The record gives the reactivity of an RNA of 177 nucleotides to DMS. Conditions: 150 mM KOAc, 10 mM MgCl2 and 150 mM bicine (pH 8.5), 24 C. Source: RMDB library TTRINS, as collected in RNAgym.
[RMDB]
RNA sequence: GGGAACGACUCGAGUAGAGUCGAAAAGAUAUGGACCUACUGGUUGGGAGAUUACCCUUCGUUUGACGUAAGUCGGAAACGACUUACCGAGAAGAACAAUCGAAGAACAACCAGUAGGUCCUAAGUCCUAUUUUCGACUGUUCGCAGUCGAAAAUAGAAAAGAAACAACAACAACAAC
Reactivity to DMS in 0.01 (KOAc 150mM, MgCl2 10mM, bicine 150mM(pH8.5), 24C), signal-to-noise 1, nucleotides 027 to 126: g000a090u030a220u000g000g000a000c010c000u020a040c000u000g010g000u000u000g030g000g000a070g020a060u000u000a080c300c190c050u020u000c020g000u000u000u020g000a300c300g000u000a000a000g030u000c000g010g000a100a130a210c010g010a020c000u000u000a020c000c000g010a090g000a020a010g020a110a240c230a080a010u000c000g000a120a170g010a090a210c000a000a030c010c010a000g030u010a000g000g000u000c000c010u010a000a130g010u000c030